[RMDB]
RNA sequence: GGGAACGACUCGAGUAGAGUCGAAAAUUGGCGCGAGUGUUGCCCCUGCCUGCUUUGAUGAACUCGCUGUCCCUGGCACGGGCGUUCUGGCGGUCGACCAGGGUGGCCGUCAGUGUGGUAAUGGCCCUCGGUCGAAAUCCUUCGGGAUUUCGACCGAAAAAGAAACAACAACAACAAC
Reactivity to 2A3 in 0.01 (KOAc 150mM, MgCl2 10mM, bicine 150mM(pH8.5), 24C), signal-to-noise 1, nucleotides 027 to 126: u170u110g080g000c030g000c040g010a120g070u150g040u110u080g050c020c020c010c000u000g000c000c000u050g030c040u150u160u180g080a120u200g040a090a040c000u000c080g000c060u090g070u110c000c030c000u000g000g030c000a000c120g000g000g000c000g050u150u000c000u070g070g000c000g000g120u000c040g050a080c070c000a070g000g070g040u070g060g000c000c000g040u000c000a010g070u040g010u150g000g080u090a160a100u140g040g030c000c000c000